[RMDB]
RNA sequence: GGGAACGACUCGAGUAGAGUCGAAAAGCCUCCUCGCUUCCAUAGAAAGGGGACGGGGCAGAUCGCAAGUGCUACAACCGAGCGGUGGUAUCUGUCAAAAUAAGCAGCCACUGCACAUCAAUUGACUAAACGAUGCCGAUCUUCGGAUCGGCAUCAACAAUAGCAAACACUUCGGUGUUUGCUAUUGAAAAGAAACAACAACAACAAC
Reactivity to 2A3 in 0.01 (KOAc 150mM, MgCl2 10mM, bicine 150mM(pH8.5), 24C), signal-to-noise 3, nucleotides 027 to 156: g040c000c000u010c000c010u020c020g020c070u050u050c030c010a160u070a250g150a090a120a050g010g020g020g000a010c030g000g000g010g030c010a010g000a020u030c020g000c020a050a000g010u010g040c030u160a150c090a130a070c110c080g130a030g030c010g030g000u010g010g000u010a020u050c020u020g060u070c050a000a050a030a090u110a080a000g000c010a000g000c000c000a010c000u010g050c030a040c000a040u270c090a100a190u190u240g120a120c040u160a060a060a040c090g000a000u000g000c010c010g000a010u030c000u060u110c210g060g000a000u000c000g010g000c000a000u000c000a000a000
Reactivity to DMS in 0.01 (KOAc 150mM, MgCl2 10mM, bicine 150mM(pH8.5), 24C), signal-to-noise 2, nucleotides 027 to 156: g020c000c000u000c010c010u020c010g000c000u000u000c070c060a120u020a170g010a080a100a140g000g010g040g010a030c030g000g020g010g000c130a100g010a070u010c040g020c030a030a050g010u000g010c020u000a090c050a050a190c090c070g000a170g010c020g030g010u010g020g010u000a020u010c070u000g010u010c030a050a020a120a170u010a090a040g020c000a080g000c010c010a080c000u000g000c020a120c080a110u010c070a070a120u000u010g000a150c100u010a030a130a120c090g000a030u000g010c000c000g000a040u000c000u000u000c300g050g010a010u010c010g010g020c000a000u000c000a020a090